This 177-nucleotide RNA was probed chemically with 2A3 and DMS. Values cover nucleotides 27 to 126. The data come from the RNA Mapping Database (RMDB), library OK1LIB. The RNA was probed in 150 mM KOAc, 10 mM MgCl2 and 150 mM bicine (pH 8.5) at 24 C.

RNA sequence: GGGAACGACUCGAGUAGAGUCGAAAAGCAACACCACCAGGGCGAGAGGUUGAGUUCACCACGCAGCAUCCUGUCGAAAUAAUACCCAUCGAGCGGUUGACGUUUCAGCAGUUCGUUGCAGUGCAGGCGGAACAUGCAAGUUCGCUUGCAUGUUCCGAAAAGAAACAACAACAACAAC
Reactivity to 2A3 in 0.01 (KOAc 150mM, MgCl2 10mM, bicine 150mM(pH8.5), 24C), signal-to-noise 2, nucleotides 027 to 126: g070c080a040a090c000a060c070c020a040c080c020a100g020g000g050c050g070a050g000a080g020g070u020u120g040a050g020u060u080c070a040c090c010a060c010g010c000a030g000c000a030u020c000c000u050g030u010c020g040a010a010a010u240a010a040u080a070c000c010c000a030u220c100g060a040g010c080g020g010u000u010g030a020c060g080u010u070u080c010a000g000c000a010g050u130u070c000g070u040u000g040c020a010g040u000g060c010a010g040g020
Reactivity to DMS in 0.01 (KOAc 150mM, MgCl2 10mM, bicine 150mM(pH8.5), 24C), signal-to-noise 2, nucleotides 027 to 126: g030c140a080a000c090a060c040c000a080c000c040a130g010g060g010c020g030a070g030a110g010g010u000u000g020a080g000u000u000c070a150c100c090a100c170g030c000a020g000c000a000u000c020c010u000g090u030c080g060a000a050a030u000a070a070u010a010c010c010c000a170u010c190g000a120g030c130g010g040u000u010g000a050c300g000u000u000u000c030a080g030c010a120g060u000u040c070g020u000u000g050c040a030g020u000g000c130a010g000g010